[RMDB]
RNA sequence: GGGAACGACUCGAGUAGAGUCGAAAAGUCAGAUGAGUAUAUUCUGGCUAAAGGGCCGUUACAAGUAGGAGAUUCAGUUCUCUUGCAAGGCCAUUCUCUAGCUAAGAAUAUCCUGCAUGUCGUAGGCGCACCGCCUCGUUCGCGAGGCGGAAAAGAAACAACAACAACAAC
Reactivity to 2A3 in 0.01 (KOAc 150mM, MgCl2 10mM, bicine 150mM(pH8.5), 24C), signal-to-noise 5, nucleotides 027 to 129: g060u070c040a000g000a050u030g020a040g050u040a000u000a020u020u000c000u000g010g020c000u000a060a000a000g000g000g000c010c000g060u100u180a050c080a160a120g000u020a000g020g000a000g010a020u020u110c040a040g300u140u000c000u000c000u000u000g000c020a050a070g000g000c000c000a030u300u050c000u010c000u040a010g000c000u130a210a020g000a010a010u010a010u030c000c000u110g120c040a040u070g060u090c040g020u030a060g020g000c020g000c030a030
Reactivity to DMS in 0.01 (KOAc 150mM, MgCl2 10mM, bicine 150mM(pH8.5), 24C), signal-to-noise 4, nucleotides 027 to 129: g000u020c070a070g040a040u020g000a130g000u070a000u000a000u000u000c010u010g010g020c020u000a020a010a100g060g040g000c000c040g090u070u020a080c220a070a090g000u000a020g020g010a050g030a050u020u000c220a220g080u010u010c030u000c020u000u000g000c040a080a100g020g040c000c030a110u070u010c060u030c080u040a020g010c020u030a060a030g000a090a000u020a020u010c060c010u000g050c020a070u050g000u040c040g060u110a020g000g050c080g010c200a120